[RMDB]
RNA sequence: GGGAACGACUCGAGUAGAGUCGAAAACAAGUAGCGUUAGGUCGUCUGCAAAGAAUCCGUGCUGCAGUAACGGCACCUCUGCAAGGCGUUGGCUCAACGAGUUCAUGACAAUAAUGAACAUGAUUGGGGGGAUGUGAGAAUUCGUUCUCACAUCCCCAAAAGAAACAACAACAACAAC
Reactivity to 2A3 in 0.01 (KOAc 150mM, MgCl2 10mM, bicine 150mM(pH8.5), 24C), signal-to-noise 1, nucleotides 027 to 126: c060a000a020g140u040a000g000c030g000u210u000a040g060g060u140c000g000u000c000u010g030c070a220a000a000g240a080a010u140c000c000g090u100g050c010u130g000c070a130g030u170a050a020c000g030g000c000a000c000c000u000c000u090g000c000a000a070g000g000c000g010u170u250g030g000c000u130c030a000a000c010g070a030g070u000u000c000a000u030g080a000c000a110a030u130a300a050u030g000a060a000c040a030u060g000a300u080u010g000g000
Structure probing data (2A3) for a 177-nucleotide construct. For 2A3, 345 sequencing reads were counted. The reactions ran in a buffer of 150 mM KOAc, 10 mM MgCl2 and 150 mM bicine (pH 8.5), at 24 C.